[RMDB]
RNA sequence: GGGAACGACUCGAGUAGAGUCGAAAAGAUAUGGACGAAAGACAUGCGUUAAGCAACGUUUGACGGAUACGGUCGGAAACGACCGUAUCCCGAGUUGAAUACACGCAACAGCUUUCGUCCUAAGUCAUCCACUUCAUUACUUCGGUAAUGAAGUGGAAAAAGAAACAACAACAACAAC
Reactivity to DMS in 0.01 (KOAc 150mM, MgCl2 10mM, bicine 150mM(pH8.5), 24C), signal-to-noise 2, nucleotides 027 to 126: g020a080u000a300u010g000g010a020c000g020a020a010a010g020a030c120a200u000g000c000g030u000u000a250a250g000c000a070a000c010g010u010u010u000g000a140c300g020g000a000u000a000c000g010g010u000c000g020g030a040a030a150c000g000a000c000c000g040u010a000u000c000c000c000g000a030g010u000u000g000a030a030u020a120c300a020c000g000c000a050a050c300a110g040c010u000u000u000c010g000u000c000c000u000a000a060g000u000c020a160
Reactivity to 2A3 in 0.01 (KOAc 150mM, MgCl2 10mM, bicine 150mM(pH8.5), 24C), signal-to-noise 1, nucleotides 027 to 126: g010a000u040a040u100g000g010a000c000g040a010a000a000g080a100c140a300u170g000c000g000u000u100a080a030g150c000a020a020c020g070u200u300u300g040a010c040g000g000a000u000a030c000g050g000u000c010g000g000a010a010a000c010g010a000c040c040g000u010a000u000c010c000c000g000a010g000u000u000g030a050a080u200a140c140a000c090g020c020a030a190c070a080g040c010u000u020u020c000g000u000c000c000u010a010a000g000u000c010a070